RNA sequence: GGGAACGACUCGAGUAGAGUCGAAAAGUCUGUGCGUUUCCAUUUGAGUAUCCUGAAAACGGGCUUUUCAGCAUGGAACGUACAUAUUAAGUAGUAGGAGUGCAUAGUGGCCCGUAUAGCAGGCAUUGAGGCGAGGAUUGUUUCGACAAUCCUCGAAACGUAGUACAGGCUUCGGCCUGUACUACGUAAAAGAAACAACAACAACAAC
Reactivity to 2A3 in 0.01 (KOAc 150mM, MgCl2 10mM, bicine 150mM(pH8.5), 24C), signal-to-noise 1, nucleotides 027 to 156: g000u010c030u010g020u030g000c020g030u000u060u050c000c010a000u050u060u080g030a070g090u170a080u170c010c010u020g040a050a040a040a070c030g030g000g010c050u020u020u070u150c030a010g010c020a020u040g010g010a030a020c000g000u040a010c000a000u050a020u010u090a090a020g040u040a000g000u020a000g000g060a050g000u030g020c090a140u050a150g090u060g010g000c000c020c000g000u070a000u060a090g050c030a000g020g010c010a010u030u150g060a050g090g090c000g000a000g000g000a000u000u000g030u000u030u040c040g000a000c000a000a000u000c010c020u000c000g000a000a000
Reactivity to DMS in 0.01 (KOAc 150mM, MgCl2 10mM, bicine 150mM(pH8.5), 24C), signal-to-noise 1, nucleotides 027 to 156: g000u010c090u040g000u000g050c060g000u000u010u010c000c030a160u000u010u000g000a140g010u000a050u000c120c000u020g000a190a000a130a050c060g030g030g010c080u030u000u000u000c010a130g120c160a020u000g010g010a080a050c000g000u000a040c050a020u020a030u000u000a090a160g050u000a050g030u000a140g030g020a200g010u010g040c010a090u010a120g000u000g030g000c020c050c020g010u000a010u000a120g040c040a030g010g000c020a100u000u020g000a130g010g030c000g020a040g000g000a020u000u000g030u000u000u000c290g010a070c020a000a000u020c040c010u000c000g020a000a020